[RMDB]
RNA sequence: GGGAACGACUCGAGUAGAGUCGAAAACUUUUUAGUGCUUCUCGUGGCAGCUAUAAUGGCAUGACGCAUGGUCGAAAGCGGUUGGCCGCUGCAGAAGUUGCCGUUCUCGUGAGGAGACGAACAAUGAAUCAGCACUAUGUUUCGACAUAGUGCUGAUAAAAGAAACAACAACAACAAC
Reactivity to 2A3 in 0.01 (KOAc 150mM, MgCl2 10mM, bicine 150mM(pH8.5), 24C), signal-to-noise 7, nucleotides 027 to 126: c020u090u050u000u080u300a160g020u130g150c010u000u010c010u000c070g030u080g040g000c000a010g000c010u030a040u070a300a120u170g100g000c030a030u130g070a040c030g060c130a130u130g210g010u110c060g070a120a090a050g020c040g090g000u080u090g140g030c020c010g000c030u010g000c000a010g060a120a000g000u030u050g020c010c010g060u180u040c020u030c000g160u160g060a090g080g040a030g030a020c010g030a070a030c070a100a120u250g090a020
Reactivity to DMS in 0.01 (KOAc 150mM, MgCl2 10mM, bicine 150mM(pH8.5), 24C), signal-to-noise 4, nucleotides 027 to 126: c050u000u030u030u040u040a050g050u020g000c020u000u000c000u000c050g090u020g000g000c030a070g000c030u010a060u030a070a050u070g000g010c010a090u000g010a260c060g000c120a080u040g000g010u000c040g000a030a090a060g010c000g000g000u010u000g010g020c010c010g040c030u010g000c050a060g010a060a030g010u000u020g040c020c000g000u010u010c040u000c000g030u040g020a080g000g000a100g020a040c020g000a140a080c300a080a090u050g000a190
Background
This 177-nucleotide RNA was probed chemically with 2A3 and DMS. For DMS the reverse transcriptase was MarathonRT. It was measured as part of the RMDB library OK1LIB.